[RMDB]
RNA sequence: GGGAACGACUCGAGUAGAGUCGAAAAUCCACUCGUUCGCGAGUGGAAAAAACCGUAGGACGUUUGUGGCUUUUGACGGCUACCCACUUCGAAAGAGGUGGGAGCCGAUAAGCCAUUGACGUCCUAAACGGAAAAAACCGCCCUUUCGAGGGCGGAACUGCUCUGAGAUAUUCGUAUCUCAGAGCAGAAAAGAAACAACAACAACAAC
Reactivity to 2A3 in 0.01 (KOAc 150mM, MgCl2 10mM, bicine 150mM(pH8.5), 24C), signal-to-noise 1, nucleotides 027 to 156: u000c000c000a020c000u010c000g070u140u070c300g020c090g070a080g010u060g000g060a000a060a000a000a000a060c010c000g010u020a000g000g000a000c000g000u050u000u010g030u000g000g000c010u010u070u110u180g170a110c020g010g010c030u300a300c000c010c010a000c000u040u000c010g070a090a070a040g000a000g000g040u030g000g000g000a000g000c000c000g010a000u000a010a000g000c010c000a000u010u000g000a000c000g000u010c000c000u000a000a000a000c000g000g050a040a030a000a060a000a030c020c030g000c000c020c000u020u040u040c220g000a000g000g000g010c010g000g000a000a010
This 207-nucleotide RNA was probed chemically with 2A3. The reactions ran in a buffer of 150 mM KOAc, 10 mM MgCl2 and 150 mM bicine (pH 8.5), at 24 C. For 2A3, 937 sequencing reads were counted. For 2A3 the reverse transcriptase was SuperScript II with manganese.